Structure probing data (DMS and 2A3) for a 177-nucleotide construct. DMS adducts were read by reverse transcription with MarathonRT. The 2A3 profile rests on 1,457 reads. 2A3 adducts were read by reverse transcription with SuperScript II with manganese. Reactivities are given for positions 27 through 126.

[RMDB]
RNA sequence: GGGAACGACUCGAGUAGAGUCGAAAAGACGGAAAAGAUCGAACCUAAGAAGAUGAGGAAGUGUGAGCCGAAUCCUAGGGCUCCUAGGGACGCAUCGUCCGAUGCGAAAUAAACACCAACGUCGAAACAUCAGCGUAUGCUUCGGCAUACGCUGAUGAAAAGAAACAACAACAACAAC
Reactivity to DMS in 0.01 (KOAc 150mM, MgCl2 10mM, bicine 150mM(pH8.5), 24C), signal-to-noise 2, nucleotides 027 to 126: g000a050c070g000g000a180a120a070a110g030a040u010c020g000a030a250c000c010u000a060a050g000a260a090g000a020u010g010a070g010g020a100a190g000u020g030u000g000a100g010c120c040g000a160a040u020c010c010u040a030g010g000g040c090u000c010c060u030a000g040g000g010a190c000g000c040a020u000c040g000u040c040c050g050a020u000g000c030g010a120a030a060u020a050a030a040c190a090c070c040a070a070c150g000u000c020g000a110a080a080
Reactivity to 2A3 in 0.01 (KOAc 150mM, MgCl2 10mM, bicine 150mM(pH8.5), 24C), signal-to-noise 2, nucleotides 027 to 126: g030a000c040g080g000a000a050a090a130g040a060u200c110g000a040a160c030c040u080a100a040g070a070a050g060a050u100g130a030g020g040a030a090g100u030g000u100g000a020g000c000c000g130a080a100u120c030c000u010a030g020g070g120c000u000c000c000u000a000g010g000g020a000c000g050c000a000u000c000g150u020c070c160g000a000u030g000c000g020a110a000a000u080a040a040a000c010a030c020c020a010a050c020g070u090c020g050a000a060a000